[RMDB]
RNA sequence: GGGAACGACUCGAGUAGAGUCGAAAAGUCGUAGUUCGGAUUGCGGAUUGAAACUCAUCCGCAUGAAGCUGGAUUCGGUAGUAAUCGCGCCUCAGAAGGGCGCGGUGAAUACGUCCCUGCUCCUUGCCGAGACUAAAUGGUUCGCCAUUUAGUCUCGAAAAGAAACAACAACAACAAC
Reactivity to 2A3 in 0.01 (KOAc 150mM, MgCl2 10mM, bicine 150mM(pH8.5), 24C), signal-to-noise 2, nucleotides 027 to 126: g000u000c020g060u070a020g020u070u170c030g030g020a040u010u040g000c000g000g000a020u040u190g100a240a090a070c080u050c080a010u000c010c000g000c000a000u010g020a020a010g020c030u030g010g000a010u070u000c010g040g020u030a020g010u000a010a030u000c000g000c000g000c010c000u060c040a170g060a270a060g020g000g000c000g000c010g000g000u010g000a000a020u070a070c010g030u020c010c010c000u020g050c020u030c040c000u030u070g040c040
Reactivity to DMS in 0.01 (KOAc 150mM, MgCl2 10mM, bicine 150mM(pH8.5), 24C), signal-to-noise 2, nucleotides 027 to 126: g010u000c000g040u010a030g010u010u010c010g010g000a120u000u010g030c000g010g000a040u000u000g000a110a100a170c280u000c100a040u000c010c010g010c000a010u000g010a200a160g000c030u000g010g010a030u010u020c040g000g000u020a020g000u000a090a000u000c000g010c010g000c000c000u000c070a210g010a250a300g000g000g000c010g010c000g020g020u010g000a120a200u000a090c020g000u010c020c000c000u010g030c060u000c030c010u000u010g010c300
The data come from the RNA Mapping Database (RMDB), library RFMREP. An RNA of 177 nucleotides, treated with 2A3 and DMS and read out base by base. For 2A3 the reverse transcriptase was SuperScript II with manganese. DMS adducts were read by reverse transcription with MarathonRT. Values are in units of 0.01, from 0 to 300, in steps of 10.